[RMDB]
RNA sequence: GGGAACGACUCGAGUAGAGUCGAAAAGACUGCCAGCGGAACGAGGAGAACAUCCGACGCAAACGGGAAAACCUGAUGCGUGAGCUGGUUCUGAAUAAGGGCAGGGCAUUUACCGUAACGGACGUGAGAUGGACAAGCAUUUCGAUGCUUGUCCAUCAAAAGAAACAACAACAACAAC
Reactivity to DMS in 0.01 (KOAc 150mM, MgCl2 10mM, bicine 150mM(pH8.5), 24C), signal-to-noise 3, nucleotides 027 to 126: g000a100c160u000g020c000c010a020g030c020g000g020a070a030c200g010a120g000g000a010g030a170a100c220a110u020c030c010g090a000c020g000c020a020a030a230c300g000g000g000a100a110a100a170c000c000u000g010a300u000g000c030g000u010g010a120g010c020u020g000g010u020u000c000u000g000a100a110u050a060a130g000g000g010c000a030g010g010g000c080a080u040u000u030a090c090c010g020u020a080a140c060g000g000a020c080g000u000g000a110
Reactivity to 2A3 in 0.01 (KOAc 150mM, MgCl2 10mM, bicine 150mM(pH8.5), 24C), signal-to-noise 2, nucleotides 027 to 126: g050a030c030u020g000c000c010a060g000c000g010g120a080a020c020g030a120g060g080a130g020a010a110c070a110u000c020c030g020a000c000g000c000a020a060a070c020g010g000g000a000a120a030a300c010c010u040g000a020u050g010c000g000u000g010a000g000c030u100g060g000u070u000c010u040g040a040a050u200a050a100g070g000g000c000a020g040g050g010c080a090u100u070u050a090c030c000g020u050a030a010c020g020g100a000c050g110u100g110a100
Background: Source: RMDB library OK1LIB, as collected in RNAgym. The record gives the reactivity of an RNA of 177 nucleotides to DMS and 2A3. Values are in units of 0.01, from 0 to 300, in steps of 10. The reactions ran in a buffer of 150 mM KOAc, 10 mM MgCl2 and 150 mM bicine (pH 8.5), at 24 C.